Chemical mapping of a 207-nucleotide RNA with DMS and 2A3. The RNA was probed in 150 mM KOAc, 10 mM MgCl2 and 150 mM bicine (pH 8.5) at 24 C. The data come from the RNA Mapping Database (RMDB), library OK3TST. The DMS profile rests on 1,720 reads. Values are in units of 0.01, from 0 to 300, in steps of 10. For DMS the reverse transcriptase was MarathonRT.
RNA sequence: GGGAACGACUCGAGUAGAGUCGAAAAAUCUCAGAUCUAGUGACCUCCCAUUUCUUGAGUCUUCAUUUUGAUGAUCAAAUGAUCAAGAGAAAGAAUCUGAUUGAUCCAGCCAAGAUCAUGUAUCUACCCUUAGACCAGUCAGUUAUGGCCAAGAGGAAUGCAGCUAAAUGUUCGCAUUUAGCUGCAUAAAAGAAACAACAACAACAAC
Reactivity to DMS in 0.01 (KOAc 150mM, MgCl2 10mM, bicine 150mM(pH8.5), 24C), signal-to-noise 1, nucleotides 027 to 156: a050u010c020u010c030a170g020a230u000c050u000a230g000u000g020a130c060c020u000c040c000c070a300u000u000u000c000u000u000g010a200g060u000c010u020u000c000a130u020u000u000u010g010a200u010g020a120u000c030a100a090a190u000g020a050u000c020a040a130g000a110g030a090a090a120g000a030a150u020c020u000g010a090u000u000g020a050u000c020c120a060g030c050c030a030a140g000a000u000c020a060u020g020u000a040u000c000u010a190c070c030c020u000u000a060g020a020c010c000a030g020u000c010a120g000u000u020a120u000g000g060c000c000a060a070g010a050g050g050a150
Reactivity to 2A3 in 0.01 (KOAc 150mM, MgCl2 10mM, bicine 150mM(pH8.5), 24C), signal-to-noise 2, nucleotides 027 to 156: a020u080c020u020c010a040g020a160u060c030u240a080g110u040g300a140c020c070u040c000c030c010a030u000u060u000c020u010u070g030a020g010u010c010u060u000c070a150u040u040u110u060g110a160u040g030a030u060c100a040a190a150u240g010a020u020c010a050a000g020a020g070a180a040a030g070a030a030u010c000u040g050a130u090u030g000a000u040c020c080a010g090c030c010a030a050g010a020u020c020a040u150g100u070a040u040c030u040a030c010c010c000u010u030a000g000a040c020c000a000g040u090c000a040g030u080u130a100u200g000g000c010c020a100a000g090a020g110g010a040